RNA sequence: GGGAACGACUCGAGUAGAGUCGAAAAGUCAUGCCUUCGGGCAUGACAGGUACCGAGAGGUACCAAAUAGCGUACAGGAGACUCAGACUGUACGCUAAAAAAGUGUGUGUUCAAUAAGCGCCAAUUGAACACACACUAAAAUGGUGCAAGAGUGUCAUCGAUAUUUACGUUUCGACGUAAAUAUCGAAAAAGAAACAACAACAACAAC
Reactivity to 2A3 in 0.01 (KOAc 150mM, MgCl2 10mM, bicine 150mM(pH8.5), 24C), signal-to-noise 3, nucleotides 027 to 156: g000u010c000a010u010g000c000c010u040u080c240g030g010g000c000a000u000g000a000c010a000g000g000u000a000c000c000g010a030g000a020g080g000u000a000c000c020a000a040a020u040a000g000c000g000u000a010c000a000g020g020a080g070a120c020u040c100a020g020a120c000u020g000u000a000c000g000c000u000a010a000a000a000a010a020g000u010g000u000g000u000g000u000u000c010a020a010u110a180a070g090c060g070c130c030a010a010u000u000g000a010a000c010a010c000a000c000a000c000u000a000a000a000a020u150g090g000u100g000c040a070a050g050a020g050u060g080u080c040a050
Reactivity to DMS in 0.01 (KOAc 150mM, MgCl2 10mM, bicine 150mM(pH8.5), 24C), signal-to-noise 1, nucleotides 027 to 156: g020u000c000a020u010g020c000c010u040u000c300g000g010g000c030a000u000g020a010c030a000g030g040u010a000c000c030g010a300g000a300g020g020u010a010c000c010a090a040a090u000a010g020c000g010u020a010c030a000g020g020a260g010a180c060u030c060a120g000a260c000u010g020u000a000c000g000c000u000a000a010a020a040a010a020g030u010g050u000g010u000g000u000u000c000a000a000u000a050a110g040c060g060c040c040a090a040u000u000g010a050a000c000a010c000a000c000a010c000u010a010a020a110a090u010g000g000u010g020c060a100a060g000a140g000u000g000u000c060a230